An RNA of 207 nucleotides, treated with 2A3 and DMS and read out base by base.
It was measured as part of the RMDB library OK3TST.
Values cover nucleotides 27 to 156.
[RMDB]
RNA sequence: GGGAACGACUCGAGUAGAGUCGAAAACGAUCUGUUCGCAGAUCGAGCUACGGAGACGUAGCGAAGCGCGUUAGGGCCCGGGGGCGCGCCCUACCGGAAAUAAAACCAUAUCCACGUGUGCUAGGAUAUGGCCGGGCCCAAAGAAACAGCACACGAAAUUACUAAUUAAUUUCGAUUAAUUAGUAAUAAAAGAAACAACAACAACAAC
Reactivity to 2A3 in 0.01 (KOAc 150mM, MgCl2 10mM, bicine 150mM(pH8.5), 24C), signal-to-noise 2, nucleotides 027 to 156: c010g000a000u000c000u020g040u060u050c160g000c090a000g000a000u000c010g000a030g000c000u000a010c000g030g010a080g040a120c000g000u000a010g000c000g010a110a040g010c010g010c010g020u030u030a040g000g010g000c010c010c020g010g010g000g020g000c020g000c000g020c010c010c000u040a040c020c040g080g110a070a140a060u190a030a090a020a020c010c000a000u010a000u000c000c010a020c140g000u010g000u000g010c000u020a030g000g000a010u010a000u000g010g000c010c030g000g000g000c000c000c000a010a030a000g020a010a060a010c070a020g000c000a000c000a010c000g010a020a110
Reactivity to DMS in 0.01 (KOAc 150mM, MgCl2 10mM, bicine 150mM(pH8.5), 24C), signal-to-noise 1, nucleotides 027 to 156: c030g020a000u020c000u010g010u010u000c140g100c010a040g000a030u000c000g000a070g010c000u000a010c010g000g040a300g030a250c020g010u060a040g060c000g000a080a140g000c010g020c030g050u000u010a200g010g010g040c000c000c050g070g030g000g000g000c040g010c090g000c010c110c020u000a190c000c010g000g010a130a060a110u000a040a060a060a150c000c000a040u000a010u010c020c000a090c030g060u000g030u000g030c000u010a230g010g000a020u000a010u010g000g050c040c070g010g040g040c000c000c020a020a040a110g010a170a060a090c150a040g020c010a010c010a040c010g010a130a140